[RMDB]
RNA sequence: GGGAACGACUCGAGUAGAGUCGAAAAAUGGUAGUUAGUCUACUCGCUAUCCUAGUUACUUUGGAGUAAUCUAAAGUGUGUGUAAACGGGCGAAAGUCUGUAAAAUACUGGGGACUUAGGGUCAACAAGAACUAGUAGACCUUCGGGUCUACUAGAAUCCCUUAAGAUGGUUCGCCAUCUUAAGGGAAAAAGAAACAACAACAACAAC
Reactivity to DMS in 0.01 (KOAc 150mM, MgCl2 10mM, bicine 150mM(pH8.5), 24C), signal-to-noise 2, nucleotides 027 to 156: a090u010g010g020u000a040g000u000u000a040g010u000c000u000a040c010u000c060g000c070u000a060u000c030c030u000a080g000u000u000a060c020u000u000u030g000g020a070g010u010a140a180u000c010u010a020a030a020g020u000g010u000g020u000g030u000a070a170a080c030g010g020g010c000g000a120a090a190g010u000c000u010g020u010a020a050a050a030u010a030c020u000g010g000g020g010a090c040u010u000a100g020g020g000u000c060a070a080c090a060a110g000a050a150c000u000a020g030u000a020g000a020c000c010u010u000c300g070g040g000u000c000u000a000c000u000a000g000a120a080
Reactivity to 2A3 in 0.01 (KOAc 150mM, MgCl2 10mM, bicine 150mM(pH8.5), 24C), signal-to-noise 2, nucleotides 027 to 156: a000u070g020g010u000a010g020u040u080a060g040u080c030u020a030c000u030c020g010c070u050a050u090c000c030u090a100g040u060u050a000c000u000u040u000g000g000a020g010u130a120a110u000c040u040a010a000a030g010u030g020u030g000u000g020u090a010a060a110c000g000g000g000c010g020a060a020a020g000u000c000u010g030u040a000a000a110a000u140a040c020u000g010g000g010g010a000c000u010u050a060g050g000g040u070c040a020a010c030a130a040g060a120a050c000u000a020g000u000a000g000a010c000c000u010u010c100g020g000g000u000c000u010a000c020u000a000g000a010a000